Structure probing data (DMS and 2A3) for a 177-nucleotide construct. 2A3 adducts were read by reverse transcription with SuperScript II with manganese.
RNA sequence: GGGAACGACUCGAGUAGAGUCGAAAAGACGAAGGCAAGACCUAGAUCUGCCGUCGGAAGAAGAAUCGAGUAGCCGGUCGACACAACGGAAGCGAAAGUGUCCGCGAUGUUGAUGAGCGUCGCCGGUUCGAACCAUAGCGUUCGCGCUAUGGUUCGAAAAAGAAACAACAACAACAAC
Reactivity to DMS in 0.01 (KOAc 150mM, MgCl2 10mM, bicine 150mM(pH8.5), 24C), signal-to-noise 2, nucleotides 027 to 126: g010a090c000g020a050a000g040g060c000a000a030g000a010c010c090u090a100g000a120u030c000u000g020c000c000g070u050c000g000g000a110a000g040a100a120g000a140a300u000c050g040a150g000u020a050g020c010c000g000g030u300c010g040a000c000a030c090a200a110c030g000g000a220a060g010c000g030a020a150a090g000u020g020u050c130c000g070c260g000a210u010g000u000u010g010a110u060g010a140g000c180g000u050c020g000c070c000g000g030u000
Reactivity to 2A3 in 0.01 (KOAc 150mM, MgCl2 10mM, bicine 150mM(pH8.5), 24C), signal-to-noise 2, nucleotides 027 to 126: g070a000c070g000a050a060g000g000c090a240a000g000a000c000c060u190a120g040a300u000c010u000g000c000c000g040u000c020g130g030a030a140g120a150a010g050a000a060u240c150g010a000g030u110a050g000c000c000g000g100u180c050g070a040c000a000c000a040a020c010g010g030a150a000g000c000g120a060a000a180g210u210g010u070c010c000g040c030g010a000u060g000u040u040g010a100u120g020a000g060c080g010u040c030g030c030c000g000g020u060